Chemical mapping of a 177-nucleotide RNA with DMS and 2A3.
For DMS the reverse transcriptase was MarathonRT.
The 2A3 profile rests on 46,279 reads.
Conditions: 150 mM KOAc, 10 mM MgCl2 and 150 mM bicine (pH 8.5), 24 C.
The DMS profile rests on 22,634 reads.

RNA sequence: GGGAACGACUCGAGUAGAGUCGAAAAGGUGGCUCGUAGUGUGCUCACGACUCUGCAGAGUACGAGUCACCGAUUUAGCAUGUUCGUCCUACGAAAGGGGCUCUCGAGCAGUAGGACGUUCAUGCGAGGGAAGGUGUACCUUCGGGUAUACCUUCCCAAAAGAAACAACAACAACAAC
Reactivity to DMS in 0.01 (KOAc 150mM, MgCl2 10mM, bicine 150mM(pH8.5), 24C), signal-to-noise 5, nucleotides 027 to 126: g010g010u000g010g000c000u000c000g010u000a020g010u010g000u000g010c000u020c180a160c120g010a060c090u000c030u010g000c010a020g010a020g000u000a010c010g000a010g010u010c000a000c000c010g010a010u010u010u020a120g000c000a000u000g000u000u000c000g010u000c000c000u000a000c000g000a060a150a130g010g020g010g000c040u010c030u030c130g010a080g010c120a230g010u000a000g000g010a000c000g020u010u010c000a000u000g000c010g000a100
Reactivity to 2A3 in 0.01 (KOAc 150mM, MgCl2 10mM, bicine 150mM(pH8.5), 24C), signal-to-noise 9, nucleotides 027 to 126: g010g000u000g000g000c000u000c020g010u020a050g120u110g060u030g140c010u050c030a160c070g170a100c070u080c080u190g010c020a020g030a020g200u010a000c000g000a000g000u000c000a000c000c000g000a000u000u010u040a020g000c000a000u000g000u000u000c000g000u010c000c000u000a010c010g110a120a080a140g130g040g050g020c020u030c020u060c130g110a030g010c020a010g010u000a000g000g000a000c000g000u000u000c000a000u000g000c000g000a110